RNA sequence: GGGAACGACUCGAGUAGAGUCGAAAAGAUAUGGAGUAAGGAGCGACGAUCUACACGACUCGGAAACGAGUUGUAGGGAGCUCCCUACUCCUAAGUCAAAAGUCAGAUGUCUUCGGACAUCUGACAAGAGUACCACAUCGUUCGCGAUGUGGUACUCAAAAGAAACAACAACAACAAC
Reactivity to 2A3 in 0.01 (KOAc 150mM, MgCl2 10mM, bicine 150mM(pH8.5), 24C), signal-to-noise 2, nucleotides 027 to 126: g000a000u030a020u040g000g000a000g000u010a030a080g010g050a000g000c010g300a300c080g040a080u030c010u060a010c030a000c100g300a080c050u020c010g000g000a010a010a000c000g000a010g010u050u010g000u070a000g000g010g020a030g000c000u000c010c010c000u010a000c000u020c000c000u010a010a000g010u000c010a110a080a060a000g000u000c000a010g010a000u010g020u000c010u090u130c250g040g010a000c000a010u000c000u010g000a010c000a000a010
Reactivity to DMS in 0.01 (KOAc 150mM, MgCl2 10mM, bicine 150mM(pH8.5), 24C), signal-to-noise 1, nucleotides 027 to 126: g030a020u000a100u000g010g000a010g000u000a010a060g020g010a060g000c010g030a120c180g020a040u000c000u000a020c000a090c300g000a060c040u000c000g010g000a050a010a070c030g000a010g010u000u000g010u000a050g000g000g010a010g000c000u000c000c000c020u000a010c020u000c000c000u000a000a030g000u000c000a150a030a150a150g030u000c010a000g020a020u010g000u000c000u010u030c190g010g000a050c000a000u000c010u000g000a000c000a000a060
Structure probing data (2A3 and DMS) for a 177-nucleotide construct. Values cover nucleotides 27 to 126. The DMS profile rests on 1,176 reads. The data come from the RNA Mapping Database (RMDB), library TTRDEL. The RNA was probed in 150 mM KOAc, 10 mM MgCl2 and 150 mM bicine (pH 8.5) at 24 C. High DMS reactivity at an A or C suggests that its Watson-Crick edge is free. DMS adducts were read by reverse transcription with MarathonRT.